Chemical mapping of a 207-nucleotide RNA with 2A3. For 2A3 the reverse transcriptase was SuperScript II with manganese. It was measured as part of the RMDB library M2RFPK.

RNA sequence: GGGAACGACUCGAGUAGAGUCGAAAAAGGCACUCCAUACCCUACUCCGACUCAAUACGACCCCGUCGUACAGAAUGGUAACAUAUCUCUCCAAAUAUCUGAGCUUGGGUAUACGGGGAAACCCAACAAAAGCAAUUGUGGUUCGCCACAAUUGCAACCACCUAAUCUCCUUCGGGAGAUUAGGUGGAAAAGAAACAACAACAACAAC
Reactivity to 2A3 in 0.01 (KOAc 150mM, MgCl2 10mM, bicine 150mM(pH8.5), 24C), signal-to-noise 1, nucleotides 027 to 156: a000g080g030c090a060c070u080c000c000a070u080a060c000c000c000u010a040c010u000c040c060g010a010c000u020c140a030a130u030a040c000g060a040c010c070c040c140g020u030c020g000u020a030c000a080g100a150a070u010g030g000u060a050a000c070a120u130a110u150c100u010c020u000c040c030a000a070a140u080a100u030c080u060g030a020g100c120u030u080g000g000g000u000a010u030a050c090g010g000g000g000a000a070a030c000c000c000a030a010c050a020a110a000a050g000c010a000a010u000u010g020u010g020g040u010u030c130g040c020c030a000c030a000a000u010u000g000c010a000a010
The RNA was probed in 150 mM KOAc, 10 mM MgCl2 and 150 mM bicine (pH 8.5) at 24 C.